The record gives the reactivity of an RNA of 207 nucleotides to 2A3 and DMS.

RNA sequence: GGGAACGACUCGAGUAGAGUCGAAAACAAGUUCGUGCUUGCGACUUACACGUAGGGCGAGGGGUGGGCGAAAGUUGCCAUGAGACCGUAACUUUCGUAGUCAUUGAUAAAGGGUCAGGUCUCGCUCAAAAGACGUUGGUCUUCGGACCAACGUCAAGAGUAGUAGAAUCUUCGGAUUCUACUACUCAAAAGAAACAACAACAACAAC
Reactivity to 2A3 in 0.01 (KOAc 150mM, MgCl2 10mM, bicine 150mM(pH8.5), 24C), signal-to-noise 6, nucleotides 027 to 156: c020a010a020g030u070u050c040g020u100g090c040u060u100g030c050g100a090c080u120u180a050c080a020c040g050u110a070g020g020g040c090g070a120g040g010g010g110u280g020g020g000c020g000a000a000a000g000u000u000g010c030c060a140u120g040a000g010a000c000c000g000u000a000a000c000u010u010u020c020g000u010a040g050u050c070a130u070u260g050a070u130a090a080a030g020g010g010u070c060a010g000g000u000c020u000c000g000c020u130c050a080a100a020a020g000a000c010g000u000u000g010g000u000c000u030u020c100g060g000a000c000c000a000a000c000g000u000c000a000a000
Reactivity to DMS in 0.01 (KOAc 150mM, MgCl2 10mM, bicine 150mM(pH8.5), 24C), signal-to-noise 1, nucleotides 027 to 156: c030a060a110g010u010u000c090g060u000g020c020u010u010g000c000g020a150c070u000u020a080c030a100c000g000u000a120g000g000g050c020g000a010g010g030g040g020u000g020g000g000c010g000a000a020a020g020u000u000g020c020c030a050u000g040a060g030a050c020c060g000u000a060a030c000u000u000u000c030g050u000a130g020u000c050a120u000u000g030a100u010a040a040a100g000g000g010u000c050a050g050g010u000c060u000c000g000c130u000c040a050a050a130a170g000a000c060g040u010u000g000g010u000c000u000u000c290g060g000a010c000c010a020a000c010g010u000c000a000a050